[RMDB]
Background:
Structure probing data (DMS) for a 177-nucleotide construct. DMS adducts were read by reverse transcription with MarathonRT.
RNA sequence: GGGAACGACUCGAGUAGAGUCGAAAAGAUAUGGACCCUAGCAAGGCGUGGAGUACGUUCAACAGCAUCGCUCGGAAACGAGCGAUGACAUGAAUAAAACACGCUGAUGACCUAGGGUCCUAAGUCACCUUCAGUGGAUCUUCGGAUCCACUGAAGGAAAAGAAACAACAACAACAAC
Reactivity to DMS in 0.01 (KOAc 150mM, MgCl2 10mM, bicine 150mM(pH8.5), 24C), signal-to-noise 1, nucleotides 027 to 126: g010a080u000a300u000g000g000a000c010c040c000u010a010g010c010a050a120g000g000c000g080u000g000g010a220g000u000a080c300g000u000u000c000a000a090c290a160g000c000a000u000c010g000c000u000c000g020g000a090a170a220c020g000a000g040c020g010a000u010g010a020c090a180u000g000a070a010u000a080a200a050a200c000a020c000g000c000u000g040a070u000g000a100c300c000u000a000g000g020g000u000c000c000u000a000a030g000u010c050a150